[RMDB]
RNA sequence: GGGAACGACUCGAGUAGAGUCGAAAACAAAACAAACACGCGCCAGCCGAAGAAAUCUGAGCUGUAAACGGCUGAAAAAGCGCGUGAAACAAAAGUCCACAGCUCAGAUAAGGACAAACAAAACAAACGCAGUACAUCAGUUCGCUGAUGUACUGCGAAAAGAAACAACAACAACAAC
Reactivity to 2A3 in 0.01 (KOAc 150mM, MgCl2 10mM, bicine 150mM(pH8.5), 24C), signal-to-noise 1, nucleotides 027 to 126: c000a000a110a040a000c090a000a180a010c010a000c000g040c000g040c000c010a000g000c000c000g070a120a110g110a260a090a000u050c050u000g000a000g040c000u020g000u000a000a030a200c020g000g140c000u000g100a240a000a000a000a000g000c000g090c000g010u000g000a010a000a040c030a000a240a000a000g030u040c010c000a000c010a000g000c000u000c000a000g000a000u020a000a000g050g000a010c050a050a150a000c070a010a180a150a010c070a080a110a000